[RMDB]
RNA sequence: GGGAACGACUCGAGUAGAGUCGAAAACAAAAUGGGAUCGCUGCAUUAGAGAACGGCGUCCUUUCAUUCUAUAUACUUUGGAGUUUUAAAAUGUCUCUAAUAAAACAAAAACAAAAACAAAAACAAAGGCUAUACUAGGAUUCGUCCUAGUAUAGCCAAAAGAAACAACAACAACAAC
Reactivity to 2A3 in 0.01 (KOAc 150mM, MgCl2 10mM, bicine 150mM(pH8.5), 24C), signal-to-noise 2, nucleotides 027 to 126: c000a000a070a000a120u110g000g000g000a110u300c120g000c000u060g040c030a220u030u140a070g050a000g000a130a000c000g000g000c000g010u010c030c000u020u000u000c040a010u100u000c020u000a070u030a000u080a300c080u010u080u060g100g000a050g120u080u020u010u040a030a050a050a020u100g010u000c000u000c030u020a050a030u100a060a110a030a040c040a020a140a080a020a010c070a000a210a000a020a010c120a050a170a050a000a020c010a070a110a000